An RNA of 177 nucleotides, treated with 2A3 and read out base by base. The reactions ran in a buffer of 150 mM KOAc, 10 mM MgCl2 and 150 mM bicine (pH 8.5), at 24 C. The data come from the RNA Mapping Database (RMDB), library OK1LIB.
RNA sequence: GGGAACGACUCGAGUAGAGUCGAAAAUGCUUCUCUUCAAAAGAAUCAAUCAUGUCACAGUACGGAUUUGUAAGAGUUCCUAGAGAGGUAGAAAAGGCCAUUCCAGUGGUGAAUGCACCUAGACCACCGGCUAUCCGCUGUUCGCAGCGGAUAGCCGAAAAGAAACAACAACAACAAC
Reactivity to 2A3 in 0.01 (KOAc 150mM, MgCl2 10mM, bicine 150mM(pH8.5), 24C), signal-to-noise 1, nucleotides 027 to 126: u080g000c000u000u040c060u000c000u040u000c110a100a050a050a040g000a000a160u060c060a000a000u010c110a200u170g020u040c040a030c040a300g110u300a020c010g020g140a100u050u050u090g030u060a120a000g020a000g030u020u000c000c000u000a000g000a000g000a000g020g000u030a010g190a090a020a000a000g020g000c000c000a000u000u000c000c020a000g160u040g080g000u120g000a050a130u070g030c110a080c030c000u050a010g070a070c000c010a000c010